[RMDB]
RNA sequence: GGGAACGACUCGAGUAGAGUCGAAAAAAAAGUCGUACAACUGCCGAAACAAUCUUUUUCGUUACUAUUAUAAUUAAAAUGGUCGAUGGCGGUUUGUCUCUGGAAAUCAGAGAGAAAGACUUGAAUAUAAUCUUUCUAUGUUCGCAUAGAAAGAUUAAAAAGAAACAACAACAACAAC
Reactivity to 2A3 in 0.01 (KOAc 150mM, MgCl2 10mM, bicine 150mM(pH8.5), 24C), signal-to-noise 5, nucleotides 027 to 126: a000a000a000a000g030u020c030g040u120a020c000a020a000c000u010g000c000c000g070a100a130a060c060a100a150u100c070u020u090u020u020u010c030g020u080u050a030c030u030a060u300u070a140u100a170a030u160u090a060a080a000a050u020g020g020u000c030g030a060u140g000g000c000g000g000u020u000u030g050u000c000u000c000u000g040g040a040a140a120u300c010a000g000a000g000a000g010a000a030a000g000a010c000u000u010g010a040a010u150a010
Reactivity to DMS in 0.01 (KOAc 150mM, MgCl2 10mM, bicine 150mM(pH8.5), 24C), signal-to-noise 5, nucleotides 027 to 126: a050a060a030a000g000u000c000g000u020a070c190a020a010c000u000g010c000c000g010a150a070a090c080a070a030u010c010u000u000u000u000u000c040g010u000u000a040c110u040a140u040u030a230u020a010a020u020u000a010a010a010a010u010g000g020u000c090g010a150u050g000g020c000g000g000u000u010u010g010u000c000u000c000u000g000g010a120a110a130u050c000a000g000a010g000a010g000a040a020a060g000a000c000u000u000g000a080a090u020a100